[RMDB]
RNA sequence: GGGAACGACUCGAGUAGAGUCGAAAAUUGUACGCCUUCGCUUUUCAUGUCCAGCAGGAAGUAGGUGAUGCCGUUGUGCUUGGGCGCCGACGGGUCCGUCCGCGCCAGCAGCGCACCCCAUUGGGAGGGUCACAGAAUUUUUCGAAAUUCUGUGACCAAAAGAAACAACAACAACAAC
Reactivity to DMS in 0.01 (KOAc 150mM, MgCl2 10mM, bicine 150mM(pH8.5), 24C), signal-to-noise 2, nucleotides 027 to 126: u000u000g000u000a080c080g000c030c000u010u020c090g020c030u000u010u010u010c040a100u010g000u000c040c080a070g010c060a060g000g010a030a050g020u000a030g030g020u000g010a120u000g000c050c050g040u000u010g010u000g020c040u000u010g010g000g030c030g030c000c150g000a030c010g000g010g020u000c150c000g000u000c010c190g010c060g010c010c020a060g020c070a060g020c040g000c050a060c030c000c020c070a160u020u010g010g020g020a100g020
Reactivity to 2A3 in 0.01 (KOAc 150mM, MgCl2 10mM, bicine 150mM(pH8.5), 24C), signal-to-noise 1, nucleotides 027 to 126: u070u030g020u060a020c020g010c000c000u020u060c050g010c030u000u090u050u110c120a100u080g080u070c070c030a010g000c000a020g110g020a070a020g000u110a030g020g000u040g030a110u030g030c030c020g040u060u080g040u040g000c020u100u130g130g030g010c020g020c000c000g000a020c000g080g030g230u140c210c010g000u000c010c000g000c000g000c010c010a040g010c070a000g020c000g000c000a040c000c000c020c000a070u060u190g060g020g030a110g040

This 177-nucleotide RNA was probed chemically with DMS and 2A3. Reactivities are given for positions 27 through 126. The reactions ran in a buffer of 150 mM KOAc, 10 mM MgCl2 and 150 mM bicine (pH 8.5), at 24 C.